[RMDB]
RNA sequence: GGGAACGACUCGAGUAGAGUCGAAAAGCGAGAUAGUCCAGCAGCAGGUUGCCGUCUGGUGAUUCCGGCUUCUCACCCCGCAGAAUCAGGUGCACCUUGAAGCCAAGUCGAGCCCCCAAAACUGCAGCAAUACAGACGAGUUCGCUCGUCUGUAUUGAAAAGAAACAACAACAACAAC
Reactivity to 2A3 in 0.01 (KOAc 150mM, MgCl2 10mM, bicine 150mM(pH8.5), 24C), signal-to-noise 2, nucleotides 027 to 126: g020c040g000a040g000a100u060a070g080u010c030c020a000g000c030a010g030c020a030g100g200u180u110g030c030c040g090u120c040u060g070g000u040g040a020u130u030c040c020g020g000c030u040u040c020u010c040a070c010c010c000c000g000c020a040g070a100a050u060c030a050g000g030u040g040c030a050c050c030u030u070g030a070a020g040c030c000a040a010g040u010c000g030a020g010c000c010c000c020c050a000a050a060a010c040u070g030c030a030g050
Reactivity to DMS in 0.01 (KOAc 150mM, MgCl2 10mM, bicine 150mM(pH8.5), 24C), signal-to-noise 4, nucleotides 027 to 126: g010c060g010a080g010a060u010a170g000u010c030c020a060g010c060a060g000c060a080g020g010u000u000g010c030c030g010u000c030u000g010g000u000g020a140u000u000c060c060g010g010c040u000u000c030u010c060a140c090c050c030c040g010c110a050g000a090a080u010c110a070g000g020u000g000c080a070c090c040u010u010g010a080a100g000c060c030a060a070g000u000c030g010a090g000c020c010c000c020c010a050a030a060a090c090u010g000c160a090g010